[RMDB]
An RNA of 177 nucleotides, treated with 2A3 and DMS and read out base by base. Reactivities are given for positions 27 through 126. 2A3 is a SHAPE reagent: it acylates the 2'-hydroxyl of flexible nucleotides of all four kinds.
RNA sequence: GGGAACGACUCGAGUAGAGUCGAAAAGCCACCAACACAUCGGCGCCGACCUGCAGGGCUCGCUCGGCCUGGGUCCGGUUUUGGAUCUGGCAGACCAACCGCGUUCCGGCGGACUUGAUGGCGUCAGCAUUUUGUAAUAAUUCGUUAUUACAAAAUGAAAAGAAACAACAACAACAAC
Reactivity to 2A3 in 0.01 (KOAc 150mM, MgCl2 10mM, bicine 150mM(pH8.5), 24C), signal-to-noise 9, nucleotides 027 to 126: g050c010c010a100c040c030a140a040c090a020c020a170u180c110g030g000c010g000c010c000g050a070c010c020u150g060c070a090g010g070g000c030u030c050g090c040u080c060g040g000c000c010u060g010g000g010u000c020c030g120g050u070u070u130u270g020g000a030u000c030u030g050g010c030a040g040a100c010c010a030a030c020c010g010c010g060u180u110c030c010g040g000c010g010g020a030c040u080u180g060a090u130g050g010c010g010u020c020a010g030
Reactivity to DMS in 0.01 (KOAc 150mM, MgCl2 10mM, bicine 150mM(pH8.5), 24C), signal-to-noise 9, nucleotides 027 to 126: g010c040c030a150c090c060a080a080c190a100c140a080u020c080g010g000c020g010c010c010g010a090c080c020u020g000c040a100g000g000g000c020u010c050g020c090u010c180g010g010c020c000u020g020g000g000u000c010c010g020g010u020u010u040u030g010g010a030u010c010u000g000g020c050a090g010a170c080c040a070a180c200c030g000c030g010u020u020c060c030g000g020c000g000g000a070c110u020u020g010a090u010g010g010c020g020u000c020a120g020